[RMDB]
RNA sequence: GGGAACGACUCGAGUAGAGUCGAAAAGGUGCAGGCGGGAAGGAAUGUGCCUAGCGGGUGUGGCGAGGAGUGUAGCCAGCUGUGGGUUUUUCUUGGGGCCCAGAGAGACAUGGGCAGAGAUGGCCGCGUACAGUAGUAGUUUCGACUACUACUGUACAAAAGAAACAACAACAACAAC
Reactivity to 2A3 in 0.01 (KOAc 150mM, MgCl2 10mM, bicine 150mM(pH8.5), 24C), signal-to-noise 9, nucleotides 027 to 126: g050g010u050g010c040a020g030g050c030g030g030g040a050a020g050g050a110a070u100g030u070g040c000c020u040a040g040c050g020g020g010u090g030u060g040g010c040g020a060g050g020a060g050u080g030u050a030g040c020c020a020g010c040u040g010u090g040g020g000u030u050u020u060u020c020u030u090g040g000g080g000c000c000c010a020g020a000g000a000g000a040c050a120u070g010g000g000c010a000g000a000g010a040u080g030g000c010c010g040c040
Reactivity to DMS in 0.01 (KOAc 150mM, MgCl2 10mM, bicine 150mM(pH8.5), 24C), signal-to-noise 9, nucleotides 027 to 126: g020g010u000g000c060a070g000g010c050g000g000g010a100a090g010g000a070a080u020g020u010g010c030c020u010a090g010c060g010g000g020u010g020u010g010g010c040g010a080g010g010a080g010u010g010u010a120g010c040c040a070g010c050u000g000u010g000g000g010u000u000u010u000u010c050u010u010g000g010g000g010c010c010c010a030g000a080g010a130g010a080c160a090u010g000g000g020c030a100g010a060g010a070u010g010g000c020c050g020c150
Source: RMDB libraries RFM100 and RFMREP, as collected in RNAgym. The record gives the reactivity of an RNA of 177 nucleotides to 2A3 and DMS.